Annotation:
Conditions: 150 mM KOAc, 10 mM MgCl2 and 150 mM bicine (pH 8.5), 24 C. Chemical mapping of a 177-nucleotide RNA with 2A3 and DMS. It was measured as part of the RMDB library TTRDEL. Reactivities are given for positions 27 through 126.
RNA sequence: GGGAACGACUCGAGUAGAGUCGAAAAGAUAUGGAGUGAGACCACAGAGAAUGUGGUCUCGGAAACGAGACCCAUUCGACGAAGUGGUCCUGAAUCUCCUAAGUCAAAACACGGGUUCGCCCGUGAAGAUCGGAAUACGGUUCGCCGUAUUCCGAUCAAAAGAAACAACAACAACAAC
Reactivity to 2A3 in 0.01 (KOAc 150mM, MgCl2 10mM, bicine 150mM(pH8.5), 24C), signal-to-noise 1, nucleotides 027 to 126: g000a000u030a000u070g020g000a000g020u190g020a300g000a050c000c000a000c000a010g040a000g000a020a000u010g120u200g000g000u000c010u000c000g000g000a010a010a000c010g000a000g010a000c000c000c020a010u010u020c070g210a260c010g040a040a010g010u000g000g000u000c000c010u020g050a070a220u060c000u000c000c000u010a000a010g000u030c020a020a000a130a100c020a000c000g070g000g020u050u040c250g130c030c020c030g000u000g010a010a030
Reactivity to DMS in 0.01 (KOAc 150mM, MgCl2 10mM, bicine 150mM(pH8.5), 24C), signal-to-noise 2, nucleotides 027 to 126: g000a000u000a060u000g000g010a030g020u000g000a140g010a000c000c000a010c010a030g000a050g010a010a010u000g000u000g010g000u000c000u000c000g020g000a000a000a010c000g000a020g010a030c000c000c010a020u000u000c000g000a210c210g000a090a090g000u000g000g020u020c000c070u020g000a160a120u010c000u000c000c000u020a020a140g010u000c000a090a060a120a150c020a020c000g020g000g030u010u020c280g020c000c000c000g020u010g000a030a100